[RMDB]
RNA sequence: GGGAACGACUCGAGUAGAGUCGAAAAGAUAUGGACGGGAGCAACAGCGUGACGGUCGGAAACGACCGCACGACAUGCUCCAGUCCUAAGUCAAACAUAGAAGUAGACUUCGGUCUACUUCUAUGAAUCUAGUAGCUCAGUUCGCUGAGCUACUAGAAAAAGAAACAACAACAACAAC
Reactivity to DMS in 0.01 (KOAc 150mM, MgCl2 10mM, bicine 150mM(pH8.5), 24C), signal-to-noise 3, nucleotides 027 to 126: g010a010u010a120u010g000g000a000c000g000g000g010a010g020c000a030a300c300a080g020c000g010u010g010a160c000g010g000u000c000g010g000a020a040a060c000g010a000c000c000g040c000a000c000g000a040c180a050u010g000c000u000c000c000a000g000u000c010c000u010a010a060g000u000c030a110a150a290c010a000u000a000g010a000a010g000u000a000g000a010c000u010u020c160g020g000u000c000u000a010c000u000u000c000u000a000u000g000a060a100
Reactivity to 2A3 in 0.01 (KOAc 150mM, MgCl2 10mM, bicine 150mM(pH8.5), 24C), signal-to-noise 2, nucleotides 027 to 126: g000a010u030a020u010g010g000a000c010g020g010g000a020g000c010a010a210c110a170g140c040g000u010g180a270c010g000g020u000c000g000g000a020a000a000c000g020a010c010c030g000c000a000c000g020a020c020a020u020g010c000u020c000c000a000g020u000c000c000u010a020a010g010u010c030a070a030a100c010a020u000a000g000a010a010g020u020a010g000a020c000u120u180c300g020g010u010c000u010a000c000u000u000c000u000a000u000g000a000a000